Structure probing data (DMS and 2A3) for a 207-nucleotide construct. It was measured as part of the RMDB library OK3TST. The reactions ran in a buffer of 150 mM KOAc, 10 mM MgCl2 and 150 mM bicine (pH 8.5), at 24 C.

RNA sequence: GGGAACGACUCGAGUAGAGUCGAAAAGUCAACAAUGCUCGCUCGCCUUAACGCAAUACGGCAAGAAGGAAGACUCCAGAUAGAUGCGAUGCGGCAAAAUGCCUAGCAAAAACUUGUCCUUUCUUAGUGUCUGGGGAGGAAACACGGGGGAGAGAACAGGUCUUAGAAAAUUCGUUUUCUAAGACCUAAAAGAAACAACAACAACAAC
Reactivity to DMS in 0.01 (KOAc 150mM, MgCl2 10mM, bicine 150mM(pH8.5), 24C), signal-to-noise 2, nucleotides 027 to 156: g030u000c030a080a080c060a100a090u010g000c010u000c030g000c040u000c040g040c030c030u010u000a070a140c130g010c060a080a100u030a110c050g000g030c060a060a040g000a080a090g040g020a080a100g010a080c040u000c010c020a110g010a140u000a060g020a260u000g020c020g030a130u000g000c060g010g010c020a080a040a110a140u010g030c030c010u020a240g060c020a050a070a020a070a030c050u010u000g000u000c010c030u000u000u000c040u010u000a110g010u000g020u020c020u000g030g010g000g040a050g010g030a070a100a080c040a010c090g010g010g000g000g000a080g010a110g000a030a100c090
Reactivity to 2A3 in 0.01 (KOAc 150mM, MgCl2 10mM, bicine 150mM(pH8.5), 24C), signal-to-noise 5, nucleotides 027 to 156: g070u040c020a020a030c040a070a190u130g020c020u030c040g070c000u030c030g000c000c030u110u100a130a050c070g010c080a050a130u100a110c080g030g020c010a010a020g040a000a020g030g010a010a080g000a050c030u010c020c040a010g040a110u100a050g100a050u070g030c030g040a030u120g050c020g020g010c010a070a100a100a090u200g000c000c020u050a050g040c050a010a030a030a020a080c050u060u090g030u050c020c000u050u090u100c040u080u100a070g030u030g030u050c020u070g020g030g000g000a020g020g020a080a080a010c040a020c050g010g000g010g000g000a010g010a000g000a040a020c040